Structure probing data (DMS and 2A3) for a 207-nucleotide construct. Conditions: 150 mM KOAc, 10 mM MgCl2 and 150 mM bicine (pH 8.5), 24 C. The data come from the RNA Mapping Database (RMDB), library ARCHII. For DMS the reverse transcriptase was MarathonRT. For DMS, 1,834 sequencing reads were counted. For 2A3, 2,220 sequencing reads were counted. For 2A3 the reverse transcriptase was SuperScript II with manganese.
RNA sequence: GGGAACGACUCGAGUAGAGUCGAAAAGAGCCUGAAAUUUAAGUCAUACUAUCUAGCUUAAUUUUCGGUCAUUUUUGAUAGUGUAGCCUUGCGUUUGACAAGCGUUGAGGUGAAAUAAAGUCUUAGCCUUGCUUUUGAGUUUUGGAAGAUGAGCGAACAUACCGCUAAGCUUCGGCUUAGCGGUAUGAAAAGAAACAACAACAACAAC
Reactivity to DMS in 0.01 (KOAc 150mM, MgCl2 10mM, bicine 150mM(pH8.5), 24C), signal-to-noise 1, nucleotides 027 to 156: g000a220g050c010c000u000g010a020a040a000u000u010u000a000a000g010u000c050a240u010a060c010u000a090u000c050u000a300g000c000u010u000a000a020u000u000u000u000c040g000g020u050c080a230u000u000u070u000u000g000a040u010a030g000u000g010u000a160g000c000c010u110u000g010c000g010u010u020u030g020a090c120a180a300g000c000g000u000u000g040a020g000g000u000g000a180a010a160u010a110a100a180g000u010c020u000u000a050g020c040c070u000u000g020c020u020u000u000u000g030a130g010u050u000u000u000g000g030a180a110g020a090u000g030a090g010c060g000a010a250
Reactivity to 2A3 in 0.01 (KOAc 150mM, MgCl2 10mM, bicine 150mM(pH8.5), 24C), signal-to-noise 4, nucleotides 027 to 156: g090a020g100c010c020u040g040a010a020a020u020u030u000a030a020g010u070c000a010u020a050c010u010a010u000c010u010a010g000c010u000u040a030a030u070u040u010u070c070g070g040u120c220a240u050u190u150u100u230g000a000u000a000g010u010g000u010a000g010c000c000u010u000g000c000g090u040u020u020g020a000c000a010a020g010c030g040u070u300g030a000g000g010u030g000a000a000a020u170a040a110a010g010u000c000u020u150a030g010c010c000u030u100g060c020u040u150u030u100g170a130g070u080u080u120u120g030g030a000a010g020a050u050g020a020g030c000g010a000a020